The record gives the reactivity of an RNA of 177 nucleotides to DMS and 2A3. For DMS, 14,231 sequencing reads were counted. Source: RMDB library TTRDEL, as collected in RNAgym. The 2A3 profile rests on 19,733 reads.

[RMDB]
RNA sequence: GGGAACGACUCGAGUAGAGUCGAAAAGAUAUGGAGGAUAGGACCCUAGCAACAGCUCGGAAACGAGACAUGCUGAGGGUCUAUCCUCCUAAGUCAAAACGGUGGAACUGUUCGCAGUUCCACCGAACAGUACAUAGUUGUUCGCAACUAUGUACUGAAAAGAAACAACAACAACAAC
Reactivity to DMS in 0.01 (KOAc 150mM, MgCl2 10mM, bicine 150mM(pH8.5), 24C), signal-to-noise 7, nucleotides 027 to 126: g010a030u000a300u000g000g010a010g000g000a010u000a040g040g010a030c000c000c000u000a040g000c010a030a090c250a160g020c010u000c000g000g000a090a090a210c010g000a020g000a030c090a130u000g010c000u000g010a020g010g010g000u010c000u000a000u000c000c000u000c000c000u000a000a060g000u000c030a080a060a070a170c030g010g010u000g010g000a010a010c000u000g020u000u020c190g010c010a000g010u000u000c000c000a000c000c000g000a010a030
Reactivity to 2A3 in 0.01 (KOAc 150mM, MgCl2 10mM, bicine 150mM(pH8.5), 24C), signal-to-noise 6, nucleotides 027 to 126: g030a010u050a030u140g000g010a010g030g010a010u050a110g300g160a190c010c000c020u020a000g010c010a010a160c060a150g040c010u000c000g030g020a080a040a040c010g010a010g060a060c050a060u070g000c000u160g230a050g000g010g000u000c000u000a000u000c000c000u010c000c000u000a000a000g000u000c000a010a000a020a040c010g000g010u010g000g000a010a000c010u010g060u120u140c300g000c130a000g000u000u000c000c000a000c010c000g010a000a000